[RMDB]
RNA sequence: GGGAACGACUCGAGUAGAGUCGAAAAUGGAAGACAUCGUCAGGUGGGGAGUUUGGCUGGGGCGGCACAUCUGUUAAAUGAUAACACAGGUGUCCUAAGGUGAGCUCAAUGAGAACAGAAAUCUCAUUUACUCUCUCGGUUUCGACCGAGAGAGUAAAAAAGAAACAACAACAACAAC
Reactivity to DMS in 0.01 (KOAc 150mM, MgCl2 10mM, bicine 150mM(pH8.5), 24C), signal-to-noise 1, nucleotides 027 to 126: u040g030g010a150a040g000a100c030a080u010c080g080u000c090a070g020g000u030g010g030g000g000a130g010u030u030u010g000g000c070u010g000g020g040g000c000g000g020c110a140c000a010u030c020u000g000u000u000a080a130a210u030g000a140u010a070a200c290a070c070a030g000g000u000g000u000c110c000u000a030a070g000g000u000g010a090g000c040u000c250a070a030u030g000a000g010a050a080c140a170g010a030a020a020u000c000u000c010a060u000
Reactivity to 2A3 in 0.01 (KOAc 150mM, MgCl2 10mM, bicine 150mM(pH8.5), 24C), signal-to-noise 2, nucleotides 027 to 126: u040g090g100a090a090g020a130c050a060u040c020g090u060c060a020g000g000u180g080g070g000g000a050g020u050u040u040g030g020c020u050g000g000g030g020c050g000g000c140a000c000a000u000c000u000g000u010u020a100a170a090u150g070a070u070a190a000c070a000c030a080g000g090u000g020u040c020c050u030a070a060g010g010u040g020a000g000c010u020c030a000a180u060g000a020g040a000a000c020a070g130a030a110a000u000c000u000c000a010u000